[RMDB]
RNA sequence: GGGAACGACUCGAGUAGAGUCGAAAAAGCAACGAGUGUGUGUGGGACGUUUUAUCCCAAGCUCUGAGUAGAGCACGCGCUCACACUCACCGCGAGCGAGCAUCAGCAGAGCGCAAACGCUGGUAAAUCCUAGUGUCCCAUUCGUGGGACACUAGGAAAAAGAAACAACAACAACAAC
Reactivity to DMS in 0.01 (KOAc 150mM, MgCl2 10mM, bicine 150mM(pH8.5), 24C), signal-to-noise 1, nucleotides 027 to 126: a130g030c030a160a060c030g010a170g010u000g010u000g000u000g010u000g000g000g000a080c020g010u000u000u020u000a090u000c030c040c020a110a110g000c010u010c030u010g000a160g030u050a080g010a030g020c000a110c090g010c020g000c000u000c000a000c000a020c000u000c000a050c020c030g000c020g000a200g000c040g000a120g020c080a020u030c010a030g010c030a030g000a140g000c060g000c070a070a050a080c080g010c020u000g030g020u000a050a030a110
Reactivity to 2A3 in 0.01 (KOAc 150mM, MgCl2 10mM, bicine 150mM(pH8.5), 24C), signal-to-noise 1, nucleotides 027 to 126: a000g060c060a090a060c000g030a030g020u010g000u020g010u000g010u000g030g000g040a080c040g000u000u000u120u300a190u040c070c040c070a030a000g010c000u000c000u030g300a250g290u220a000g020a000g000c060a020c010g030c000g000c000u010c000a020c000a000c000u010c000a000c010c030g030c030g000a080g070c040g020a040g000c010a030u060c000a010g040c000a010g030a070g110c110g000c110a060a020a000c100g030c000u070g060g050u160a050a100a080
The record gives the reactivity of an RNA of 177 nucleotides to DMS and 2A3. The RNA was probed in 150 mM KOAc, 10 mM MgCl2 and 150 mM bicine (pH 8.5) at 24 C. DMS adducts were read by reverse transcription with MarathonRT. Values cover nucleotides 27 to 126.